[RMDB]
RNA sequence: GGGAACGACUCGAGUAGAGUCGAAAAGGUGUAAAUAAUGGGCAUCAUCUCGCUAAGAUGCGCUUCCAGCAGGCGGUAAAACAGGGUCUCAUUAGUAUCUUGAAUAUUACGCAGAUAAAUAUGUUUACCUUUCACCUCUAUUCGUAGAGGUGAAAGGAAAAGAAACAACAACAACAAC
Reactivity to 2A3 in 0.01 (KOAc 150mM, MgCl2 10mM, bicine 150mM(pH8.5), 24C), signal-to-noise 2, nucleotides 027 to 126: g080g000u070g000u060a060a180a120u130a100a080u230g000g000g000c000a000u010c020a040u020c090u010c030g000c050u050a160a000g040a100u090g030c010g030c110u100u020c000c000a000g000c000a020g010g130c040g120g030u150a070a060a000a040c030a090g020g020g000u020c020u010c050a100u050u050a020g010u030a030u100c050u060u100g050a090a020u110a060u100u040a010c100g000c000a020g010a170u160a040a060a000u270a020u090g120u070u100u130a130
Reactivity to DMS in 0.01 (KOAc 150mM, MgCl2 10mM, bicine 150mM(pH8.5), 24C), signal-to-noise 2, nucleotides 027 to 126: g020g030u010g020u000a050a060a090u020a100a110u030g040g020g010c040a040u010c020a100u010c030u000c080g010c120u000a090a090g000a050u000g040c070g000c080u010u000c040c060a130g030c090a090g010g020c030g010g000u010a070a010a110a100c080a030g000g030g000u000c040u010c140a150u000u000a040g020u000a030u000c020u000u000g010a100a050u000a050u000u000a060c150g000c060a140g010a050u000a030a100a080u000a070u010g000u000u000u020a150

Chemical mapping of a 177-nucleotide RNA with 2A3 and DMS. The 2A3 profile rests on 910 reads. Values cover nucleotides 27 to 126. For 2A3 the reverse transcriptase was SuperScript II with manganese. The data come from the RNA Mapping Database (RMDB), library OK2TST. DMS (dimethyl sulfate) methylates the pairing face of unpaired adenines and cytosines.